The record gives the reactivity of an RNA of 177 nucleotides to DMS and 2A3.
It was measured as part of the RMDB libraries RFM100 and RFMREP.
Values cover nucleotides 27 to 126.
RNA sequence: GGGAACGACUCGAGUAGAGUCGAAAAGAAAGAAAGCACCUUGGGUUGGUUAAUGCUACACCAACAAGGUAGACAUACAUCCUGUGGAGUAGAACAUGAGCGAUAAAAUUAUUCACCUGACUGACAAUGUAACGAAUUGUUUCGACAAUUCGUUACAAAAAGAAACAACAACAACAAC
Reactivity to DMS in 0.01 (KOAc 150mM, MgCl2 10mM, bicine 150mM(pH8.5), 24C), signal-to-noise 4, nucleotides 027 to 126: g000a100a110a130g010a090a110a090g010c040a050c010c000u010u010g000g010g000u030u000g010g010u000u000a100a070u040g000c100u010a060c130a050c000c020a020a120c050a030a020g020g010u000a040g010a080c140a070u010a120c120a070u010c010c040u000g000u010g010g000a090g020u030a030g000a040a060c100a040u000g000a080g000c040g010a070u010a040a060a040a100u020u010a030u000u010c010a070c010c010u000g000a100c110u030g030a070c170a060a100
Reactivity to 2A3 in 0.01 (KOAc 150mM, MgCl2 10mM, bicine 150mM(pH8.5), 24C), signal-to-noise 4, nucleotides 027 to 126: g070a000a060a010g110a080a110a000g040c030a010c010c000u070u030g230g020g000u080u060g030g040u040u200a090a030u170g060c060u110a050c020a000c050c010a020a000c000a010a020g020g000u010a040g010a010c020a020u160a000c010a040u050c000c000u040g030u070g010g030a070g030u080a010g060a060a040c040a130u140g060a050g030c040g000a040u130a040a090a030a030u300u140a060u110u040c050a060c040c000u020g070a080c020u050g010a050c040a090a170